[RMDB]
Source: RMDB library 15KREP, as collected in RNAgym. Chemical mapping of a 177-nucleotide RNA with 2A3 and DMS. Reactivities are given for positions 27 through 126.
RNA sequence: GGGAACGACUCGAGUAGAGUCGAAAACAACUCACAUUUGUGAAGAAUUUUAUUACUGCCAAUCCGGCAUGGAGUAAGGCAGUCUUUAUUUCGCCUUACAAUUCACAGAAUGCUGUGUCUCGUUCAAGCAGAUAGCAUUGUUCGCAAUGCUAUCUGCAAAAGAAACAACAACAACAAC
Reactivity to 2A3 in 0.01 (KOAc 150mM, MgCl2 10mM, bicine 150mM(pH8.5), 24C), signal-to-noise 1, nucleotides 027 to 126: c010a020a070c000u020c010a020c000a020u030u050u100g010u030g010a010a030g010a050a030u010u170u100u000a180u160u180a060c030u000g000c000c000a060a070u120c100c100g050g060c110a000u170g060g020a080g000u010a040a020g030g000c050a010g020u000c020u040u160u080a140u030u100u090c030g010c030c010u010u010a000c030a030a130u020u020c010a000c000a020g140a040a020u010g000c040u010g030u010g000u000c010u010c060g050u100u110c050a070a000
Reactivity to DMS in 0.01 (KOAc 150mM, MgCl2 10mM, bicine 150mM(pH8.5), 24C), signal-to-noise 1, nucleotides 027 to 126: c160a060a180c000u010c100a180c040a170u000u000u000g000u000g000a010a030g010a020a070u010u000u020u000a110u000u000a160c030u000g050c020c000a110a100u010c220c200g000g010c010a030u040g000g010a100g000u000a030a020g000g030c000a070g000u010c190u000u000u010a160u010u000u000c200g000c010c000u000u000a000c040a090a130u000u000c050a000c020a050g000a090a030u020g020c190u000g000u000g000u000c030u000c080g000u000u010c190a050a130